[RMDB]
RNA sequence: GGGAACGACUCGAGUAGAGUCGAAAAAGAGAUGCCGCAGCAAACAAAAUGGAGAAAAGUCCUUUCCCUCGUGGAGCUUACAUUCUAGUAAAGGGAAGCAGGCAGUAAAUUAAUCAAAAACUACAAUAUGCAGGAUGUCCACGCGUGAAUGCUAUGGGACGAUGUUCUUAUUCGUAAGAACAUCGUCAAAAGAAACAACAACAACAAC
Reactivity to DMS in 0.01 (KOAc 150mM, MgCl2 10mM, bicine 150mM(pH8.5), 24C), signal-to-noise 2, nucleotides 027 to 156: a070g000a200g000a110u010g000c070c040g080c050a150g050c030a110a090a130c030a070a070a080a100u000g000g020a070g000a070a070a080a160g020u000c010c040u000u000u000c000c000c020u010c050g020u000g010g030a060g010c070u010u000a080c100a100u000u000c030u000a090g030u000a080a100a170g000g010g030a030a040g030c040a090g030g040c040a100g000u000a070a070a090u000u010a060a150u000c030a060a060a080a060a050c040u000a040c010a100a120u000a090u010g010c000a050g000g030a080u000g000u000c010c030a070c100g050c030g050u010g000a080a120u000g020c010u000a070u000g030g000
Reactivity to 2A3 in 0.01 (KOAc 150mM, MgCl2 10mM, bicine 150mM(pH8.5), 24C), signal-to-noise 3, nucleotides 027 to 156: a000g020a000g000a020u040g040c020c040g000c070a030g000c020a050a080a180c070a090a170a060a020u160g030g010a080g050a040a120a030a030g050u060c000c000u020u020u020c010c000c000u020c010g010u060g020g010a010g010c000u030u030a030c010a090u100u060c040u080a030g030u110a130a140a000g000g000g000a010a010g030c030a010g040g000c020a000g010u040a000a110a050u160u170a030a040u110c070a040a020a040a100a040c040u150a070c100a070a080u090a060u260g010c010a020g030g000a020u030g000u040c010c010a010c040g000c000g000u020g060a050a020u040g020c030u060a070u140g040g030